[RMDB]
RNA sequence: GGGAACGACUCGAGUAGAGUCGAAAAGAUAUGGAGCGAACUACAGGAUUCGUGGACGUUGAAAUCGGAAACGAUGGAGUCCAUCCUUUCCUGCGCUCCUAAGUCAAAACUUGCGUUCGCGCAAGAAUCGUGUGCUUUAGUUCGCUAAAGCACACGAAAAAGAAACAACAACAACAAC
Reactivity to 2A3 in 0.01 (KOAc 150mM, MgCl2 10mM, bicine 150mM(pH8.5), 24C), signal-to-noise 1, nucleotides 027 to 126: g030a000u100a060u220g040g010a010g000c000g020a080a030c050u150a060c300a020g050g010a010u020u110c060g030u030g030g020a000c010g130u250u060g000a030a050a010u060c040g020g060a050a030a080c000g020a010u010g050g000a010g000u000c000c000a020u160c020c010u030u040u030c010c000u000g080c030g000c020u000c000c000u000a030a000g000u010c020a010a010a110a160c000u000u010g010c000g040u000u070c300g000c010g000c120a000a000g000a040a100
Reactivity to DMS in 0.01 (KOAc 150mM, MgCl2 10mM, bicine 150mM(pH8.5), 24C), signal-to-noise 1, nucleotides 027 to 126: g010a030u000a300u020g000g000a020g010c000g000a020a050c100u010a300c000a010g000g000a030u010u010c100g020u010g000g000a010c010g000u000u000g000a110a110a040u000c000g000g010a100a080a130c030g000a000u000g000g020a180g000u000c010c000a010u010c030c030u000u000u000c000c000u000g000c120g030c030u000c000c010u000a010a000g000u000c030a050a080a040a140c030u000u000g000c070g010u000u020c250g020c010g000c000a000a030g000a060a090